This 177-nucleotide RNA was probed chemically with DMS and 2A3. For DMS the reverse transcriptase was MarathonRT. The reactions ran in a buffer of 150 mM KOAc, 10 mM MgCl2 and 150 mM bicine (pH 8.5), at 24 C.
[RMDB]
RNA sequence: GGGAACGACUCGAGUAGAGUCGAAAAGAUAUGGAGAAUGCGUCCGAGGAUCUAAAUCUGCUCGGAAACGAGCAGAGUUUAGGGAGGAUACAUUCUCCUAAGUCAAAAGGUGCAGUUCGCUGCACCACAUUUGAUGUUUCUUCGGAAACAUCAAAUGAAAAGAAACAACAACAACAAC
Reactivity to DMS in 0.01 (KOAc 150mM, MgCl2 10mM, bicine 150mM(pH8.5), 24C), signal-to-noise 5, nucleotides 027 to 126: g000a040u010a300u010g000g000a020g010a010a000u000g010c020g030u000c000c010g010a080g010g010a030u020c000u000a000a020a050u000c000u000g020c000u000c000g000g020a070a070a140c010g020a020g000c000a000g000a020g020u000u000u000a020g000g000g010a030g020g000a020u000a070c010a010u000u000c010u000c000c000u000a010a070g010u000c030a110a090a180a140g020g020u000g000c000a000g010u000u020c300g040c020u000g010c010a000c000c010a050
Reactivity to 2A3 in 0.01 (KOAc 150mM, MgCl2 10mM, bicine 150mM(pH8.5), 24C), signal-to-noise 3, nucleotides 027 to 126: g030a020u090a040u190g000g000a000g000a020a020u010g010c030g010u000c000c010g030a300g040g020a020u020c000u010a000a020a010u020c000u000g010c000u010c010g040g000a080a060a020c010g000a000g010c000a000g000a010g000u010u010u010a000g000g010g020a030g020g010a000u010a020c000a000u010u010c000u000c000c000u000a020a010g050u020c040a000a030a090a200g000g000u000g000c010a000g010u050u160c250g070c160u000g010c000a000c000c000a000
The DMS profile rests on 9,119 reads.
For 2A3, 16,336 sequencing reads were counted.
The data come from the RNA Mapping Database (RMDB), library TTRDES.
Reactivities are given for positions 27 through 126.